[RMDB]
RNA sequence: GGGAACGACUCGAGUAGAGUCGAAAAGAUUCCUCGUUGUUGAGCGAGGUUUAAACAAAUCGACCACACAAACGUAGAGCCGACUACGGAUUUAUAAAUUAAGGCUUUAAGUGUGAUAAGGAGACAAAAAACGAUGUUGUGUUCGCACAACAUCGAACUACCAUAAACGGUUCGCCGUUUAUGGUAGAAAAGAAACAACAACAACAAC
Reactivity to DMS in 0.01 (KOAc 150mM, MgCl2 10mM, bicine 150mM(pH8.5), 24C), signal-to-noise 3, nucleotides 027 to 156: g000a300u010u000c000c000u010c050g030u000u010g030u010u020g020a140g040c100g010a030g010g010u000u000u000a070a050a160c100a070a110a130u000c000g000a150c000c000a110c020a190c040a110a070a120c050g000u000a050g010a100g020c010c000g000a140c070u000a160c050g010g020a130u000u010u000a090u000a100a070a080u000u010a050a300g000g000c030u010u010u000a020a160g020u000g010u000g010a120u000a050a070g010g000a300g000a100c050a000a050a040a070a090a090c020g020a010u000g010u000u000g020u010g000u010u020c300g000c020a000c000a010a000c000a000u000c000g000a030a060
Reactivity to 2A3 in 0.01 (KOAc 150mM, MgCl2 10mM, bicine 150mM(pH8.5), 24C), signal-to-noise 5, nucleotides 027 to 156: g080a090u170u120c000c000u000c000g010u000u010g010u010u010g000a000g010c020g000a000g020g000u050u080u040a010a020a010c060a000a000a010u000c000g010a000c010c010a000c000a010c010a040a110a020c010g000u000a000g000a010g010c000c010g080a010c010u010a000c010g020g000a010u060u300u040a180u140a090a020a020u130u100a000a000g000g000c000u040u120u060a080a030g000u000g000u010g010a000u030a030a060g180g010a060g020a060c150a050a150a020a010a040a020c020g000a000u000g010u000u000g010u000g010u040u080c210g040c050a000c000a010a000c000a000u000c000g000a000a000
Annotation
An RNA of 207 nucleotides, treated with DMS and 2A3 and read out base by base. The data come from the RNA Mapping Database (RMDB), library M2RFPK. The reactions ran in a buffer of 150 mM KOAc, 10 mM MgCl2 and 150 mM bicine (pH 8.5), at 24 C. For DMS, 4,613 sequencing reads were counted.